[RMDB]
The record gives the reactivity of an RNA of 207 nucleotides to 2A3 and DMS. For DMS, 5,123 sequencing reads were counted. The 2A3 profile rests on 4,384 reads. It was measured as part of the RMDB library OK3TST.
RNA sequence: GGGAACGACUCGAGUAGAGUCGAAAAUAGCUCUUCUAUCCUUUUCCGGAAGCAAUGAAAUCACUUCAAUAAAUGAUUCAACCAUGAGUGUGAAACUAAGUCGAGAAUUACUCAUGCAUUUGUUAGUUAUUCGGAGCGCGCAAUUUUUAAACUGUCCCUGCUAGAUAGUAUUCGUACUAUCUAGCAGAAAAGAAACAACAACAACAAC
Reactivity to 2A3 in 0.01 (KOAc 150mM, MgCl2 10mM, bicine 150mM(pH8.5), 24C), signal-to-noise 7, nucleotides 027 to 156: u060a010g010c020u020c010u130u050c030u070a220u140c030c040u090u110u100u090c060c010g010g040a030a020g030c060a020a090u110g050a080a040a090u060c020a020c030u120u080c130a040a060u050a090a020a020u050g050a100u140u130c070a080a070c070c010a010u010g000a000g010u040g020u060g060a050a050a040c100u130a140a080g140u170c080g070a030g060a140a060u110u080a020c000u000c010a010u030g010c010a040u030u000u050g020u030u020a030g000u000u020a020u040u040c030g010g000a020g020c020g000c010g000c050a030a050u030u050u010u130u250a170a180a070c040u060g020u060c040c020
Reactivity to DMS in 0.01 (KOAc 150mM, MgCl2 10mM, bicine 150mM(pH8.5), 24C), signal-to-noise 3, nucleotides 027 to 156: u000a110g020c080u010c030u000u010c020u000a110u010c010c030u000u000u010u000c030c070g010g010a070a100g000c060a070a140u010g000a090a100a000u000c020a020c020u020u010c060a100a150u000a070a040a040u000g000a060u000u010c050a080a080c150c010a030u000g000a040g090u010g020u010g000a150a070a150c100u000a060a090g000u000c050g010a180g020a160a140u010u000a030c010u010c000a040u000g000c090a130u010u000u000g020u000u000a030g000u000u000a150u010u000c020g030g020a100g040c070g010c120g030c060a030a020u000u020u020u010u010a040a080a090c050u010g000u000c050c050